[RMDB]
RNA sequence: GGGAACGACUCGAGUAGAGUCGAAAAGAUAUGGACUCGGCUAGCUGCGUGUCGGAAACGACACGGCAGCUUGGACCCGAGGUCCUAAGUCAAAACCAGUCUUGACUGUUCGCAGUCAAGACUGGAAGGUUAUAACUAGCUUCGGCUAGUUAUAACCAAAAGAAACAACAACAACAAC
Reactivity to DMS in 0.01 (KOAc 150mM, MgCl2 10mM, bicine 150mM(pH8.5), 24C), signal-to-noise 3, nucleotides 027 to 126: g010a050u000a300u000g000g000a230c010u000c010g000g010c040u000a010g020c000u000g020c000g000u010g010u000c000g000g000a060a060a140c000g000a000c000a000c020g010g040c000a010g010c010u000u000g020g010a110c300c010c010g010a020g000g000u000c000c000u000a050a100g010u010c020a090a060a140a150c000c000a000g000u000c010u000u000g000a010c000u000g000u000u000c180g020c000a010g000u000c000a000a010g010a010c000u010g000g010a010a020
Reactivity to 2A3 in 0.01 (KOAc 150mM, MgCl2 10mM, bicine 150mM(pH8.5), 24C), signal-to-noise 2, nucleotides 027 to 126: g020a010u050a020u160g000g010a010c000u010c010g000g040c020u020a020g000c000u000g000c000g010u000g030u000c000g020g020a130a080a000c010g000a000c000a040c000g080g060c040a000g040c000u000u040g010g040a030c000c030c000g000a010g060g060u030c010c000u040a120a040g020u030c030a010a010a080a180c010c000a000g000u010c000u010u000g010a000c010u010g110u100u130c300g020c180a020g000u010c010a000a000g010a000c000u010g000g000a000a010
Structure probing data (DMS and 2A3) for a 177-nucleotide construct. Values cover nucleotides 27 to 126. For 2A3, 6,237 sequencing reads were counted. The reactions ran in a buffer of 150 mM KOAc, 10 mM MgCl2 and 150 mM bicine (pH 8.5), at 24 C.